[RMDB]
RNA sequence: GGGAACGACUCGAGUAGAGUCGAAAAGCUGUUCCAGAGUCUGUGGACUCUGAAUACUAGCGGUCAGUCGUCGUCCACAGACGACGUGAAGUGAUUAUGAGAAUGAUCACACUGACGACGUAUUCUCAUAUGUCCUAUCGCUAGGAACAGGAUAGGCACCUGGAAAAUCAUUCGUGAUUUUCCAGGUAAAAGAAACAACAACAACAAC
Reactivity to 2A3 in 0.01 (KOAc 150mM, MgCl2 10mM, bicine 150mM(pH8.5), 24C), signal-to-noise 5, nucleotides 027 to 156: g030c020u020g010u050u020c010c000a010g010a000g020u010c030u150g140u250g130g010a000c000u000c020u010g010a020a030u110a090c060u070a030g200c040g050g020u020c020a020g030u020c000g010u010c000g000u010c030c060a100c020a090g000a000c000g000a000c000g030u050g110a150a040g020u020g020a000u010u030a020u040g090a050g050a130a050u050g010a030u030c010a010c010a020c050u060g010a020c040g010a020c050g040u040a050u060u010c040u020c050a040u050a080u180g030u060c000c010u030a030u040c020g030c100u030a030g010g010a020a010c010a010g000g040a060u080a040g040g000c030
Reactivity to DMS in 0.01 (KOAc 150mM, MgCl2 10mM, bicine 150mM(pH8.5), 24C), signal-to-noise 3, nucleotides 027 to 156: g000c010u000g030u000u000c020c010a070g010a070g020u010c040u010g040u030g060g020a020c000u000c010u020g010a060a040u010a080c010u000a120g000c040g020g000u000c010a070g020u000c020g020u010c020g010u000c010c160a140c280a220g020a060c020g000a020c010g050u000g000a100a140g020u010g010a100u000u000a030u000g020a300g000a170a080u010g010a020u000c000a040c040a300c060u000g030a110c040g000a080c050g020u000a040u000u010c060u020c030a080u000a090u000g000u000c010c020u000a070u000c010g040c030u000a100g010g000a060a090c030a050g000g020a160u000a030g010g020c140